[RMDB]
RNA sequence: GGGAACGACUCGAGUAGAGUCGAAAAUUAGCACCGCGUGUAAGAUACCAAACUGAACCGAUUGUUAGCGUUACUAACAACGAUGAGCCAUCGGAAAAGGCUGUUACUAUCGAAAGAAUGGUUGAUACAUACGAAAAGGAUUCGUCCUUUUCGUAUGAAAAGAAACAACAACAACAAC
Reactivity to DMS in 0.01 (KOAc 150mM, MgCl2 10mM, bicine 150mM(pH8.5), 24C), signal-to-noise 9, nucleotides 027 to 126: u010u000a110g010c040a100c040c070g020c110g020u000g020u010a070a070g010a100u010a120c040c030a040a070a120c130u010g010a100a220c220c010g000a190u000u000g010u000u000a010g000c050g010u000u010a150c030u010a010a020c020a010a030c010g000a020u000g000a050g010c000c010a020u000c020g010g000a030a020a030a040g010g010c010u000g010u010u000a060c070u000a080u000c030g000a100a080a120g000a050a090u000g000g000u000u000g010a140u010a150
Reactivity to 2A3 in 0.01 (KOAc 150mM, MgCl2 10mM, bicine 150mM(pH8.5), 24C), signal-to-noise 9, nucleotides 027 to 126: u070u030a020g030c020a020c060c040g040c080g040u050g010u040a060a040g020a090u100a080c030c000a040a080a040c060u130g040a070a030c030c000g040a060u010u010g010u010u010a010g010c070g180u220u070a050c020u030a030a020c020a010a010c010g010a020u040g010a010g020c010c010a020u040c020g190g000a020a040a010a000g010g000c000u000g010u030u050a060c050u030a030u090c040g090a120a050a040g090a060a060u080g050g020u020u040g020a030u050a130